The data come from the RNA Mapping Database (RMDB), library TTRDEL. Chemical mapping of a 177-nucleotide RNA with DMS and 2A3. For 2A3, 7,749 sequencing reads were counted. DMS adducts were read by reverse transcription with MarathonRT. The reactions ran in a buffer of 150 mM KOAc, 10 mM MgCl2 and 150 mM bicine (pH 8.5), at 24 C.
RNA sequence: GGGAACGACUCGAGUAGAGUCGAAAAGAUAUGGAUUGGAGCGAUAAGCAUUUAUCGGAAACGAUAGGGUGCUUUUGACGCUUAAUCCUAAGUCAAAGCACUGUUUCACUUCGGUGAAACAGUGCAACACUUAAUUGUGCUUCGGCACAAUUAAGUGAAAAGAAACAACAACAACAAC
Reactivity to DMS in 0.01 (KOAc 150mM, MgCl2 10mM, bicine 150mM(pH8.5), 24C), signal-to-noise 3, nucleotides 027 to 126: g010a030u000a270u000g000g000a010u000u000g000g030a000g010c000g010a130u010a010a020g010c010a010u000u000u000a000u000c000g010g000a090a070a150c000g000a010u000a020g000g000g020u000g000c000u000u000u000u000g010a180c020g020c000u000u000a010a010u000c000c000u000a030a120g010u000c030a080a120a170g000c000a010c000u000g000u000u000u000c000a000c000u000u010c220g040g000u010g000a000a000a010c000a000g020u000g000c010a030a050
Reactivity to 2A3 in 0.01 (KOAc 150mM, MgCl2 10mM, bicine 150mM(pH8.5), 24C), signal-to-noise 2, nucleotides 027 to 126: g030a020u070a040u150g000g000a010u030u090g160g030a010g010c010g050a080u030a230a000g000c020a020u050u060u000a010u020c010g030g000a050a050a030c020g010a010u020a020g160g090g030u010g010c000u010u040u050u130g120a050c000g000c000u010u010a000a010u000c000c000u000a100a010g040u020c080a120a100a000g000c000a010c000u010g000u000u030u010c000a010c000u030u070c290g130g000u000g000a000a000a010c010a000g000u000g000c000a000a000